RNA sequence: GGGAACGACUCGAGUAGAGUCGAAAACAGAAAAUACAGAAGGCAGAAUAGCCCAAAUGUGUUGUCUCUCAAAUUAGUCACAUAAGAAUAUUCUGAGAAUCAUCUUCUAAGGUUUUAAUGAUGUGUACGUGGAAUUUAGGACCUAGAUGAAAUAAAAUACCUAUGCGUGAUUCGUCACGCAUAGGUAAAAAGAAACAACAACAACAAC
Reactivity to DMS in 0.01 (KOAc 150mM, MgCl2 10mM, bicine 150mM(pH8.5), 24C), signal-to-noise 1, nucleotides 027 to 156: c040a200g020a170a040a090a130u040a150c020a170g000a170a100g010g050c000a220g000a120a160u000a100g000c000c010c000a050a090a220u000g000u000g000u020u000g000u000c010u000c070u010c000a040a040a110u000u000a140g000u000c010a150c210a220u010a150a120g000a110a020u000a050u000u000c090u000g020a090g020a150a210u000c010a020u000c000u000u000c050u010a100a060g090g050u000u000u000u000a020a020u000g000a170u060g040u000g000u010a050c120g010u000g010g000a030a170u000u000u010a040g000g000a060c070c000u000a070g000a040u000g010a010a040a200u000a000a060a090a270
Reactivity to 2A3 in 0.01 (KOAc 150mM, MgCl2 10mM, bicine 150mM(pH8.5), 24C), signal-to-noise 1, nucleotides 027 to 156: c030a020g080a070a080a010a000u070a000c010a020g070a020a000g030g010c030a010g110a200a040u090a060g000c010c000c000a050a070a030u070g010u000g000u030u060g020u070c040u000c000u000c060a000a040a250u120u060a060g070u070c070a010c020a040u130a070a100g020a130a050u120a110u180u020c070u070g030a030g030a150a080u020c010a050u000c010u100u040c030u230a090a090g020g000u030u010u000u030a040a020u070g040a010u060g020u010g020u130a050c100g090u130g000g130a040a150u020u000u000a020g000g040a000c010c000u000a000g060a070u110g000a010a000a120u210a050a060a000a000